[RMDB]
RNA sequence: GGGAACGACUCGAGUAGAGUCGAAAAAAGAACCAUGCCCAAAUCUAGUGACCAUGGUUCGCACAACAUGAAAAUCAGAUGAGAGGGAGCACGAGUGAAAGAAGCUCAAACACAGGGCGUGAGGUGCCCCUGCCAGCCUCGGUCCCUGACCACACGAGCGCUAAUAAUCAUUCGUGAUUAUUAGCGCAAAAGAAACAACAACAACAAC
Reactivity to DMS in 0.01 (KOAc 150mM, MgCl2 10mM, bicine 150mM(pH8.5), 24C), signal-to-noise 1, nucleotides 027 to 156: a070a050g010a060a050c000c000a080u010g020c010c050c030a140a110a200u000c150u010a120g010u000g000a100c270c000a000u000g000g020u000u000c010g000c120a170c030a110a050c000a150u010g030a100a100a040a120u000c060a100g000a070u030g010a090g000a040g010g040g020a070g000c070a070c060g000a030g050u000g030a130a080a050g010a190a260g000c010u010c000a090a100a110c040a080c080a000g000g060g040c010g030u000g000a140g000g000u000g020c020c010c020c050u010g010c060c050a170g020c010c030u020c030g000g020u020c000c000c000u000g000a190c070c060a090c100a020c060g000a140
Reactivity to 2A3 in 0.01 (KOAc 150mM, MgCl2 10mM, bicine 150mM(pH8.5), 24C), signal-to-noise 2, nucleotides 027 to 156: a000a000g020a010a010c020c010a010u010g000c000c000c050a080a080a060u150c090u120a030g030u040g090a050c030c000a010u000g030g000u000u000c000g030c010a100c010a030a120c020a090u180g100a070a050a070a000u110c070a070g090a190u080g030a050g020a030g060g030g000a050g010c040a040c130g010a020g070u090g080a090a110a030g060a030a010g000c010u000c030a160a070a000c080a000c000a020g010g000g000c070g100u120g000a010g040g030u060g000c020c010c000c010u020g030c010c020a050g010c010c000u040c010g040g060u180c030c000c020u040g030a070c060c020a020c030a020c130g050a030
An RNA of 207 nucleotides, treated with DMS and 2A3 and read out base by base. It was measured as part of the RMDB library OK3TST. The 2A3 profile rests on 1,359 reads. DMS adducts were read by reverse transcription with MarathonRT. The RNA was probed in 150 mM KOAc, 10 mM MgCl2 and 150 mM bicine (pH 8.5) at 24 C. For 2A3 the reverse transcriptase was SuperScript II with manganese.